Annotation: Chemical mapping of a 207-nucleotide RNA with 2A3. Conditions: 150 mM KOAc, 10 mM MgCl2 and 150 mM bicine (pH 8.5), 24 C.
RNA sequence: GGGAACGACUCGAGUAGAGUCGAAAAGGAGGAAAAAAGAUGAAUAGAACAUCUUCUAUGUACUUGAUGCGCUCACAGUCUGGUUGUAGAGACUGUCACAUAAACAUUUCAUCCCAAUUCAUUUAUUUGUUCAUUCCUUCAGCCAAUAUAUAUUGAGGCCUGUUUCAACUUUCGAGUUGAAACAGGCAAAAGAAACAACAACAACAAC
Reactivity to 2A3 in 0.01 (KOAc 150mM, MgCl2 10mM, bicine 150mM(pH8.5), 24C), signal-to-noise 1, nucleotides 027 to 156: g020g020a000g000g160a010a000a030a000a000a030g000a010u040g020a070a150u090a170g080a070a030c010a040u050c000u210u000c010u020a110u080g060u010a010c040u030u080g030a040u050g040c060g000c080u080c040a010c000a020g060u000c020u080g210g050u170u100g110u180a060g000a000g010a000c010u030g040u070c000a080c000a120u200a070a110a010c020a110u100u250u190c020a030u050c000c000c000a000a040u080u090c010a010u000u000u190a000u050u050u080g040u040u010c020a030u050u040c010c000u010u060c020a020g090c050c010a040a000u170a000u060a020u030a130u140u190g010a050g020
Overview
Reactivities are given for positions 27 through 156. The 2A3 profile rests on 433 reads. 2A3 adducts were read by reverse transcription with SuperScript II with manganese.